[RMDB]
RNA sequence: GGGAACGACUCGAGUAGAGUCGAAAAAGUCUACUUUUCGAAGUAGACUGUGCUCCCACUUCAUCGAGGUCUCACCGUGUCAUUGCCCACGACACUCGGGCGUAAUAGAUUGGUUCGCCAAUCUAAAACAUACAGACGUAUUCGUACGUCUGUAUGUAAAAGAAACAACAACAACAAC
Reactivity to 2A3 in 0.01 (KOAc 150mM, MgCl2 10mM, bicine 150mM(pH8.5), 24C), signal-to-noise 9, nucleotides 027 to 126: a000g000u000c000u000a010c000u050u060u030u160c230g090a020a000g000u000a000g000a000c000u000g000u050g010c020u010c000c010c010a040c030u150u140c030a150u080c050g060a040g030g050u010c020u020c040a070c040c040g030u030g030u040c030a080u030u180g040c000c010c010a040c050g050a020c020a010c040u040c030g020g010g000c020g030u050a090a080u020a050g010a010u000u010g020g030u030u030c200g020c050c000a010a000u000c000u010a030a030a010
Reactivity to DMS in 0.01 (KOAc 150mM, MgCl2 10mM, bicine 150mM(pH8.5), 24C), signal-to-noise 9, nucleotides 027 to 126: a020g010u000c000u000a000c000u000u000u000u010c160g010a020a010g010u000a000g000a010c000u000g010u010g030c170u000c010c000c010a160c150u000u010c080a060u000c070g010a070g010g010u000c030u000c050a090c070c050g010u000g010u000c030a180u010u000g010c020c010c020a160c130g000a070c060a050c050u000c090g010g000g000c060g010u010a080a120u000a010g000a020u000u000g000g010u000u010c250g020c000c000a010a010u000c000u000a020a050a120
Conditions: 150 mM KOAc, 10 mM MgCl2 and 150 mM bicine (pH 8.5), 24 C. This 177-nucleotide RNA was probed chemically with 2A3 and DMS. For 2A3, 23,968 sequencing reads were counted. Reactivities are given for positions 27 through 126. For 2A3 the reverse transcriptase was SuperScript II with manganese. Source: RMDB library M2PK50, as collected in RNAgym.